[RMDB]
RNA sequence: GGGAACGACUCGAGUAGAGUCGAAAAGCCGUCCGGAGACGGCGGCCCUCUGGAACCUCCCGCCCGCCCGCGGAGGCUCCCGGCGGGCCGCCGAAAGGCGGGGGUAAAAACCAGCCGGGGGCGCGGCAUUCGCAAUAGAUUUCGAUCUAUUGCGAAUAAAAGAAACAACAACAACAAC
Reactivity to DMS in 0.01 (KOAc 150mM, MgCl2 10mM, bicine 150mM(pH8.5), 24C), signal-to-noise 2, nucleotides 027 to 126: g010c000c000g000u000c010c060g000g000a260g020a080c020g010g060c000g000g040c030c010c010u000c030u010g010g020a300a080c070c040u000c030c010c060g000c040c040c030g030c130c050c070g030c220g030g000a040g030g000c010u000c140c000c000g000g000c060g050g030g080c010c060g000c000c030g010a010a060a140g010g000c000g000g010g000g020g000u030a020a080a100a190a150c000c010a080g000c000c010g000g020g000g000g000c110g000c040g000g020c050

Structure probing data (DMS) for a 177-nucleotide construct. The reactions ran in a buffer of 150 mM KOAc, 10 mM MgCl2 and 150 mM bicine (pH 8.5), at 24 C. In probing experiments dimethyl sulfate is read out at A N1 and C N3, which are open when not base-paired.